[RMDB]
RNA sequence: GGGAACGACUCGAGUAGAGUCGAAAAGUUCGAGCAGGUUAACAAGCAUUAAUACUAAAUGUGUUUCAUCGUCUACUUAUUGCUAAUAAAAUUGAUUGUUCAUCAAAAAUGCAAUUCGUUAGUUGGGGACAUUAUACACUUUCGAGUGUAUAAUGUCAAAAGAAACAACAACAACAAC
Reactivity to DMS in 0.01 (KOAc 150mM, MgCl2 10mM, bicine 150mM(pH8.5), 24C), signal-to-noise 6, nucleotides 027 to 126: g010u000u000c080g010a090g020c080a040g020g020u000u000a060a060c100a100a080g010c050a080u010u000a070a070u010a110c150u010a050a070a070u010g020u000g010u000u010u000c030a100u010c050g010u000c020u010a020c010u000u000a010u000u000g000c010u010a080a080u020a060a060a080a090u000u000g000a020u000u010g010u020u020c130a060u010c020a010a020a060a080a090u010g010c010a010a010u000u000c040g010u010u000a020g010u000u000g020g000g000
Reactivity to 2A3 in 0.01 (KOAc 150mM, MgCl2 10mM, bicine 150mM(pH8.5), 24C), signal-to-noise 9, nucleotides 027 to 126: g040u040u080c040g010a020g020c030a040g030g090u090u100a070a040c040a090a040g050c020a030u070u120a110a100u130a190c100u110a050a100a100u120g020u010g010u020u020u010c040a070u060c030g070u010c020u020a020c010u030u040a010u020u020g020c000u040a090a070u100a150a250a070a090u030u020g010a010u030u150g090u200u160c050a020u000c010a020a010a030a030a020u100g000c000a000a010u020u030c020g060u090u040a060g000u020u080g040g000g050
An RNA of 177 nucleotides, treated with DMS and 2A3 and read out base by base.
Reactivities are given for positions 27 through 126.
It was measured as part of the RMDB libraries RFM100 and RFMREP.
For 2A3 the reverse transcriptase was SuperScript II with manganese.